[RMDB]
RNA sequence: GGGAACGACUCGAGUAGAGUCGAAAAAGUCUACUUUUCGAAGUAGACUGUGCUCCCACUUGAUCGAGGUCUCACCGUCUCAUUGCCCACGACACUCGGGCGUAAUAGAUUGGUUCGCCAAUCUAAAGAUAGCAUAAAUGUUCGCAUUUAUGCUAUCAAAAGAAACAACAACAACAAC
Reactivity to 2A3 in 0.01 (KOAc 150mM, MgCl2 10mM, bicine 150mM(pH8.5), 24C), signal-to-noise 9, nucleotides 027 to 126: a000g000u000c000u000a010c000u060u050u030u150c220g080a010a000g000u000a000g000a000c000u000g000u050g010c030u020c000c020c000a030c050u070u220g080a130u110c080g030a030g020g060u010c030u020c060a060c030c030g080u020c020u020c040a100u050u200g010c010c000c000a060c060g120a050c040a030c110u070c050g010g010g000c010g010u030a070a070u010a040g010a010u010u030g030g010u030u050c160g040c050c000a000a000u000c000u010a000a010a020
Reactivity to DMS in 0.01 (KOAc 150mM, MgCl2 10mM, bicine 150mM(pH8.5), 24C), signal-to-noise 9, nucleotides 027 to 126: a010g000u000c000u000a000c000u000u000u000u010c170g010a010a010g010u000a000g000a010c000u000g000u000g020c170u000c000c000c010a150c170u010u000g010a060u000c060g010a080g010g000u000c020u000c090a090c100c070g000u000c040u000c060a100u010u010g000c020c010c010a120c110g010a090c110a080c100u000c080g000g000g010c040g010u010a060a110u000a010g000a020u000u000g000g010u000u010c250g020c000c000a010a010u000c000u000a010a080a140